[RMDB]
This 177-nucleotide RNA was probed chemically with DMS and 2A3. DMS (dimethyl sulfate) methylates the pairing face of unpaired adenines and cytosines. For 2A3, 2,222 sequencing reads were counted. The RNA was probed in 150 mM KOAc, 10 mM MgCl2 and 150 mM bicine (pH 8.5) at 24 C.
RNA sequence: GGGAACGACUCGAGUAGAGUCGAAAACAGGAGCCUUGCCGUCCACAUUGGCAGGUGUUACCACAUUGACAGAGCUGGAUGUCAGCCUGAAUCAUCUGAGCCUGCUGCCAGAUGUUUGGUGGAGCAGACAGAUCCGAGUAUUCGUACUCGGAUCUGUAAAAGAAACAACAACAACAAC
Reactivity to DMS in 0.01 (KOAc 150mM, MgCl2 10mM, bicine 150mM(pH8.5), 24C), signal-to-noise 3, nucleotides 027 to 126: c070a140g020g000a190g020c050c010u010u020g010c010c010g030u010c080c110a050c170a090u010u010g010g040c020a020g000g020u010g010u000u010a130c040c010a070c070a110u020u010g030a110c010a020g000a130g010c040u000g000g000a160u010g010u010c040a040g000c030c010u010g020a100a070u010c010a030u000c010u000g000a130g000c010c100u010g000c130u010g000c010c000a020g000a020u000g000u010u010u000g030g020u000g000g010a080g020c040a070g000
Reactivity to 2A3 in 0.01 (KOAc 150mM, MgCl2 10mM, bicine 150mM(pH8.5), 24C), signal-to-noise 2, nucleotides 027 to 126: c030a030g040g020a030g000c000c030u020u020g000c010c010g000u030c030c000a110c010a130u090u220g010g000c010a000g030g010u010g020u050u100a190c000c000a020c020a070u090u180g040a020c010a000g030a020g050c010u030g060g070a280u210g180u180c020a000g000c000c000u010g020a020a070u060c000a000u000c010u020g000a020g060c000c130u220g050c090u130g050c050c030a030g030a080u080g100u100u040u040g080g000u030g000g030a030g030c000a010g070